[RMDB]
RNA sequence: GGGAACGACUCGAGUAGAGUCGAAAAACCUCAGUCUUCGGACUGAGGUGAGCGGAGCAUGGUGGCCGUCGGAACUCCUCCUUGGUGACAAGGGCCCACGGGGUGCGGCACGCUUCGGCGUGCCGAAGCUUACGUAAUAAUUCGUUAUUACGUAAGCAAAAGAAACAACAACAACAAC
Reactivity to 2A3 in 0.01 (KOAc 150mM, MgCl2 10mM, bicine 150mM(pH8.5), 24C), signal-to-noise 4, nucleotides 027 to 126: a000c000c000u000c000a010g000u000c000u030u150c230g140g000a000c000u000g000a000g000g000u010g000a020g010c060g020g030a030g000c100a090u120g060g060u070g080g050c010c010g070u060c030g040g040a040a040c010u030c010c000u030c000c000u040u040g010g020u070g030a040c010a030a020g020g000g000c020c010c010a030c030g030g000g000g010u060g050c000g000g000c000a010c010g000c010u060u070c170g090g000c000g010u020g000c010c000g020a030a010
Reactivity to DMS in 0.01 (KOAc 150mM, MgCl2 10mM, bicine 150mM(pH8.5), 24C), signal-to-noise 4, nucleotides 027 to 126: a020c000c000u000c000a010g000u000c000u000u010c200g030g000a020c000u000g010a010g000g010u000g000a040g020c100g010g000a090g000c090a080u000g010g020u000g010g010c030c020g000u000c060g010g000a220a070c050u000c020c030u000c010c010u000u000g000g000u010g000a170c030a030a030g000g000g010c030c020c020a090c100g000g010g000g010u000g000c010g000g000c000a010c010g010c000u000u010c120g020g010c000g000u000g000c000c010g000a020a060